[RMDB]
Structure probing data (DMS and 2A3) for a 177-nucleotide construct. High 2A3 reactivity points to a flexible backbone, as in loops and unpaired stretches. The DMS profile rests on 6,440 reads. For DMS the reverse transcriptase was MarathonRT. The reactions ran in a buffer of 150 mM KOAc, 10 mM MgCl2 and 150 mM bicine (pH 8.5), at 24 C.

RNA sequence: GGGAACGACUCGAGUAGAGUCGAAAAGUGUGUCCAUGUGCUGUGGAUAAGUGUUCAGUGCAGUGUAGUUAAAACGUGUUCGAACCCCCGAACAGUUUUCAUUCAGCGUUCAAUUUUCAGCUCGCAAAUAUCCAUGCUGAUUCGUCAGCAUGGAUAUAAAAGAAACAACAACAACAAC
Reactivity to DMS in 0.01 (KOAc 150mM, MgCl2 10mM, bicine 150mM(pH8.5), 24C), signal-to-noise 5, nucleotides 027 to 126: g030u000g010u010g000u000c020c030a050u000g030u000g020c060u010g020u010g010g010a070u000a060a110g020u010g010u000u000c040a080g010u000g010c040a060g030u000g010u000a080g010u010u000a030a020a020a030c020g000u000g010u000u000c010g020a130a300c050c010c010c080c010g010a020a010c010a090g010u000u010u000u010c140a110u010u000c080a120g010c040g000u000u000c050a060a060u010u000u000u000c090a070g010c020u000c040g010c110a070a100
Reactivity to 2A3 in 0.01 (KOAc 150mM, MgCl2 10mM, bicine 150mM(pH8.5), 24C), signal-to-noise 2, nucleotides 027 to 126: g050u010g020u000g040u000c040c010a000u110g050u050g020c090u020g020u060g060g050a030u080a110a050g050u000g070u110u060c050a020g030u040g030c020a010g060u040g040u170a110g010u090u080a000a120a040a010c160g080u040g010u060u000c010g000a130a140c000c010c030c000c010g000a000a000c000a010g000u040u000u000u000c030a040u050u070c000a030g030c010g090u060u060c040a090a090u090u000u010u130c000a000g000c010u020c030g040c020a120a000